[RMDB]
Annotation:
An RNA of 177 nucleotides, treated with DMS and 2A3 and read out base by base. Source: RMDB libraries RFM100 and RFMREP, as collected in RNAgym.
RNA sequence: GGGAACGACUCGAGUAGAGUCGAAAAGAAGGUUGGUGACCUACCGUGAUGAACUGAAAAAGAUUCAAAGUAGCGGUUUGAGCGAUGUGUAUAGACAGUAACCCGGUAAAAUGUACUGAAAAUAGGGCUUACAUUGUUAGUUCGCUAACAAUGUAAGAAAAGAAACAACAACAACAAC
Reactivity to DMS in 0.01 (KOAc 150mM, MgCl2 10mM, bicine 150mM(pH8.5), 24C), signal-to-noise 9, nucleotides 027 to 126: g010a120a060g010g020u000u010g010g010u010g010a140c030c020u010a070c020c030g020u010g010a150u020g000a050a040c050u000g000a040a070a130a120a070g010a150u000u010c030a040a100a130g010u010a160g020c030g000g000u010u000u010g010a100g010c060g000a060u000g010u010g000u000a060u010a080g000a120c050a040g000u010a060a090c030c010c020g000g010u020a050a040a060a060u010g000u010a050c050u000g000a040a030a050a080u010a060g010g000g010
Reactivity to 2A3 in 0.01 (KOAc 150mM, MgCl2 10mM, bicine 150mM(pH8.5), 24C), signal-to-noise 7, nucleotides 027 to 126: g130a030a020g070g010u060u070g020g030u040g070a030c020c010u020a030c010c000g010u020g020a210u030g000a020a030c050u050g090a060a060a020a030a050g150a210u040u030c040a040a100a070g010u030a030g040c010g040g000u030u030u150g050a040g000c040g020a070u070g040u000g000u060a050u030a120g060a020c020a020g030u030a030a050c020c000c020g030g020u100a060a070a030a040u140g050u070a050c050u070g060a030a010a060a040u120a040g050g010g000
2A3 adducts were read by reverse transcription with SuperScript II with manganese. The reactions ran in a buffer of 150 mM KOAc, 10 mM MgCl2 and 150 mM bicine (pH 8.5), at 24 C.